[RMDB]
RNA sequence: GGGAACGACUCGAGUAGAGUCGAAAACGAGAUCCAGCGUGCGUGGUCCCCAGCGUUCAGCUUUGCGGACGCGACCUUGCUGCAAUUCAAUACGCUGUGUGUGAUUGAGUAGCUCUUCAGGUGCAAGCAGCUUUAGCGUUUUCGAACGCUAAAGCUGAAAAGAAACAACAACAACAAC
Reactivity to DMS in 0.01 (KOAc 150mM, MgCl2 10mM, bicine 150mM(pH8.5), 24C), signal-to-noise 2, nucleotides 027 to 126: c070g000a110g030a080u010c070c000a020g010c020g020u010g020c060g030u000g020g000u000c010c060c010c150a170g020c040g020u000u000c120a110g030c030u000u000u010g030c060g010g000a020c040g010c020g000a060c130c060u000u000g020c040u000g000c040a090a060u000u000c080a070a060u000a040c050g010c010u000g000u010g040u010g020u010g010a080u010u000g000a070g010u000a070g020c060u000c090u020u010c080a060g010g010u000g010c060a070a080g020
Reactivity to 2A3 in 0.01 (KOAc 150mM, MgCl2 10mM, bicine 150mM(pH8.5), 24C), signal-to-noise 2, nucleotides 027 to 126: c030g020a010g000a100u000c030c030a020g000c010g090u070g000c010g040u030g020g090u050c030c000c000c030a010g040c000g070u060u050c010a060g000c000u110u180u290g050c010g040g010a000c020g030c020g070a050c000c050u020u090g000c030u020g010c000a030a050u070u070c020a020a000u070a160c020g010c010u100g040u020g010u000g030u040g210a080u040u030g000a030g020u070a040g000c010u000c010u120u100c090a040g090g050u060g000c020a000a090g050
An RNA of 177 nucleotides, treated with DMS and 2A3 and read out base by base.
For DMS, 2,056 sequencing reads were counted.
Values cover nucleotides 27 to 126.
Source: RMDB library OK2TRN, as collected in RNAgym.